[RMDB]
RNA sequence: GGGAACGACUCGAGUAGAGUCGAAAAAUUAUCUUGAUCUUAGCCAGCUAAGCAGAGACUACUCCAGCAUUGAAAAAUGGCCAUCAUCAUUUAAAAGUUUUGUUUAGCACUCACGUGGAGAGCCCACGAAUCAUUCCUCAUUCGUGAGGAAUGAUUCAAAAGAAACAACAACAACAAC
Reactivity to DMS in 0.01 (KOAc 150mM, MgCl2 10mM, bicine 150mM(pH8.5), 24C), signal-to-noise 2, nucleotides 027 to 126: a090u010u010a050u010c040u020u000g010a090u010c020u010u000a130g000c070c100a120g020c060u000a070a040g010c060a080g010a100g000a080c050u010a050c050u010c060c060a100g000c040a070u000u010g000a030a040a040a090a030u000g000g010c060c060a020u010c070a020u010c060a070u000u000u000a070a030a080a090g010u000u000u000u000g010u000u000u000a060g020c060a100c060u010c090a050c070g000u000g000g000a140g000a140g000c010c000c020a100c210
Reactivity to 2A3 in 0.01 (KOAc 150mM, MgCl2 10mM, bicine 150mM(pH8.5), 24C), signal-to-noise 2, nucleotides 027 to 126: a000u170u060a110u030c020u020u150g060a050u050c010u030u090a020g060c030c070a000g030c080u030a010a010g040c020a010g040a000g000a110c030u040a030c000u090c000c020a040g010c030a080u030u080g120a160a070a000a010a020u050g030g000c020c020a050u020c000a000u040c000a020u020u170u110a090a100a030a030g040u080u010u070u090g020u040u120u070a040g050c010a010c010u050c000a040c050g040u000g030g040a070g010a030g100c010c010c000a020c040